[RMDB]
RNA sequence: GGGAACGACUCGAGUAGAGUCGAAAACCAAGAUGUAGGAAGAGAAGGAAACGACGCUAGCUGCCUGGCAAAACCGGAGCUAGGUCAGAAAGGCGCGCGCGGAGUCGAUGCAUUUAACAUUCCUUCAGUAAAUGAGUAGUUUCGACUACUCAUUUACAAAAGAAACAACAACAACAAC
Reactivity to 2A3 in 0.01 (KOAc 150mM, MgCl2 10mM, bicine 150mM(pH8.5), 24C), signal-to-noise 6, nucleotides 027 to 126: c010c000a000a020g130a070u230g050u230a090g090g110a110a080g040a040g020a130a010g050g010a040a050a010c070g040a010c030g020c280u010a010g010c010u140g250c020c040u090g020g000c030a030a050a020a090c020c010g020g000a010g000c000u000a010g020g000u030c010a000g030a010a060a000g030g000c040g000c000g010c000g030c070g090g090a040g020u120c020g020a040u080g020c030a050u080u080u090a100a030c030a050u020u060c020c000u090u070c040a020
Reactivity to DMS in 0.01 (KOAc 150mM, MgCl2 10mM, bicine 150mM(pH8.5), 24C), signal-to-noise 7, nucleotides 027 to 126: c010c010a150a110g010a110u000g020u000a060g010g010a100a080g010a110g010a040a040g000g020a050a070a150c110g010a070c000g010c010u000a050g020c010u000g020c020c000u000g050g000c060a080a040a070a300c060c060g000g010a080g010c030u010a020g000g000u000c020a110g010a060a070a060g010g020c030g000c060g010c090g010c080g010g000a100g000u000c030g000a090u000g010c050a050u000u000u010a050a080c170a150u000u000c010c000u000u000c050a140
The record gives the reactivity of an RNA of 177 nucleotides to 2A3 and DMS. The reactions ran in a buffer of 150 mM KOAc, 10 mM MgCl2 and 150 mM bicine (pH 8.5), at 24 C. For 2A3 the reverse transcriptase was SuperScript II with manganese.